[RMDB]
An RNA of 177 nucleotides, treated with DMS and 2A3 and read out base by base. The RNA was probed in 150 mM KOAc, 10 mM MgCl2 and 150 mM bicine (pH 8.5) at 24 C. 2A3 adducts were read by reverse transcription with SuperScript II with manganese.

RNA sequence: GGGAACGACUCGAGUAGAGUCGAAAAUUGCUCGUGCGUACGAUCCGUUUUCUUUGAGUCGCGUUGUUUGGGAAUGCAGCGCAAAGUAGGUGGUAAAUUCCAUCUAAAGCUAAAUAUUGGUGCGAGACCAACCUAUUACGUUCGCGUAAUAGGUUGGAAAAGAAACAACAACAACAAC
Reactivity to DMS in 0.01 (KOAc 150mM, MgCl2 10mM, bicine 150mM(pH8.5), 24C), signal-to-noise 2, nucleotides 027 to 126: u010u010g020c040u000c030g030u000g010c080g030u000a050c110g000a070u000c060c050g010u000u000u000u010c040u010u000u000g010a070g010u020c080g000c030g020u000u000g000u010u010u000g020g000g000a080a070u000g000c050a030g010c030g010c040a040a050a070g000u010a020g020g000u000g010g000u010a070a070a180u000u010c000c000a020u000c010u000a020a050a100g000c090u000a040a090a050u000a110u010u010g020g020u000g010c060g020a080g000a220
Reactivity to 2A3 in 0.01 (KOAc 150mM, MgCl2 10mM, bicine 150mM(pH8.5), 24C), signal-to-noise 5, nucleotides 027 to 126: u070u070g000c000u010c010g020u030g030c020g040u060a060c050g040a070u040c040c030g060u020u030u040u020c050u070u090u140g110a080g050u100c040g010c000g020u000u000g020u030u070u080g090g010g020a050a040u060g000c010a000g010c000g000c010a020a020a010g090u040a000g010g000u010g010g000u010a070a220a190u150u030c010c000a000u000c010u030a060a060a010g020c010u050a060a070a080u240a120u080u140g090g010u060g010c030g010a020g030a020